[RMDB]
RNA sequence: GGGAACGACUCGAGUAGAGUCGAAAACUCUCUCCGUCCUAAUAUAUAAGGCGCAAUCACUUUUUAUUUAUAUCCCAUAAUAUAAUAGCUCUCUCUCAUACAUCAAUACAGUAGUACUAGUAUUGAGCAAUGAUCGUUUGUUCGCAAACGAUCAUUGAAAAGAAACAACAACAACAAC
Reactivity to 2A3 in 0.01 (KOAc 150mM, MgCl2 10mM, bicine 150mM(pH8.5), 24C), signal-to-noise 6, nucleotides 027 to 126: c010u030c000u010c020u020c010c010g050u010c000c020u080a150a030u100a040u050a030u040a170a020g030g000c010g010c040a010a080u040c020a060c030u070u050u030u070u050a120u050u190u030a110u050a060u070c020c000c010a030u090a160a080u140a040u070a080a150u090a070g020c010u010c000u000c010u000c000u000c040a040u070a200c020a120u040c010a020a010u010a010c000a000g080u120a010g070u070a060c010u010a050g020u010a020u010u020g000a010g000
Reactivity to DMS in 0.01 (KOAc 150mM, MgCl2 10mM, bicine 150mM(pH8.5), 24C), signal-to-noise 3, nucleotides 027 to 126: c060u000c000u030c000u010c020c020g000u000c020c000u020a090a090u000a090u030a060u010a040a080g000g020c100g070c080a090a110u010c040a040c020u000u010u000u000u030a070u050u000u010a090u030a150u020c010c000c030a140u080a110a180u010a120u010a020a100u050a110g010c050u000c020u000c000u000c030u000c030a160u020a070c050a040u000c000a020a010u000a000c010a050g000u000a080g010u030a300c000u000a040g010u000a000u020u000g000a010g030